[RMDB]
RNA sequence: GGGAACGACUCGAGUAGAGUCGAAAAUCCUCUAUCUUCGGAUAGAGGAAAAGAGCUAGGAGGUACCGCUAGCAAAGAAAAGGUACCAAGACGGAAACGUCAAAACGAAGGGGUUCGCCCCUUCGAAUCUAAAUGUAAAGUUCGCUUUACAUUUAGAAAAAGAAACAACAACAACAAC
Reactivity to DMS in 0.01 (KOAc 150mM, MgCl2 10mM, bicine 150mM(pH8.5), 24C), signal-to-noise 5, nucleotides 027 to 126: u000c000c000u000c000u000a000u000c010u010u000c220g030g000a010u000a010g000a010g020g000a000a010a060a110g010a190g010c000u000a010g010g010a090g000g010u000a010c000c000g010c000u000a010g010c010a100a100a100g000a030a020a050a070g020g020u010a000c010c010a140a100g000a010c010g000g000a080a070a150c010g020u000c000a080a050a110a190c020g000a010a010g020g020g010g010u000u000c240g020c010c000c000c010u000u000c000g010a050a060
Reactivity to 2A3 in 0.01 (KOAc 150mM, MgCl2 10mM, bicine 150mM(pH8.5), 24C), signal-to-noise 4, nucleotides 027 to 126: u010c000c000u000c000u000a000u000c000u020u040c090g070g000a000u000a010g000a030g000g000a010a020a010a030g080a020g000c000u010a010g010g080a120g020g030u010a000c010c000g000c030u010a000g010c100a120a030a000g110a000a040a000a010g000g000u000a000c000c010a020a040g010a000c010g020g030a050a060a010c000g000u000c010a030a040a010a040c010g000a010a000g020g020g020g010u070u120c210g130c010c000c000c000u000u000c000g000a000a000
Structure probing data (DMS and 2A3) for a 177-nucleotide construct. It was measured as part of the RMDB library M2PK50. Values cover nucleotides 27 to 126. The DMS profile rests on 6,191 reads. The RNA was probed in 150 mM KOAc, 10 mM MgCl2 and 150 mM bicine (pH 8.5) at 24 C. 2A3 adducts were read by reverse transcription with SuperScript II with manganese. For 2A3, 16,114 sequencing reads were counted.